[RMDB]
RNA sequence: GGGAACGACUCGAGUAGAGUCGAAAACACCGCUGUUCCUGGGUGACGGUCUUGCGCUGCGCCUUCUUGGCGCGGUGGUGAGUGGCGCACCGUGGCCCCGGAUGCGGAGCCUUGCGCCGGUUCACCAAGUUGUAUUGUCCUUCGGGACAAUACAACUAAAAGAAACAACAACAACAAC
Reactivity to DMS in 0.01 (KOAc 150mM, MgCl2 10mM, bicine 150mM(pH8.5), 24C), signal-to-noise 1, nucleotides 027 to 126: c190a170c030c030g000c030u000g000u000u010c020c000u010g010g000g010u000g010a060c030g000g010u000c020u010u010g010c080g010c010u000g010c030g020c000c000u000u010c140u000u000g010g010c010g030c010g000g060u010g010g010u000g000a020g010u000g030g010c000g000c030a090c300c140g010u000g010g010c000c010c000c010g000g000a160u020g010c000g030g000a050g010c020c020u000u000g000c030g020c010c000g000g000u000u000c010a050c010c020a080
Reactivity to 2A3 in 0.01 (KOAc 150mM, MgCl2 10mM, bicine 150mM(pH8.5), 24C), signal-to-noise 1, nucleotides 027 to 126: c010a010c010c020g020c080u080g100u130u060c010c030u000g080g010g020u040g140a010c030g040g040u030c020u020u070g000c050g000c010u000g000c000g000c020c000u160u170c120u130u300g030g000c000g000c030g010g000u080g100g030u050g030a030g010u100g000g020c000g000c010a020c040c060g060u040g060g000c000c000c000c020g080g000a060u160g070c020g040g000a040g020c010c000u030u110g010c010g000c050c030g110g000u060u020c010a020c000c020a000
Chemical mapping of a 177-nucleotide RNA with DMS and 2A3. 2A3 adducts were read by reverse transcription with SuperScript II with manganese. For DMS, 2,114 sequencing reads were counted.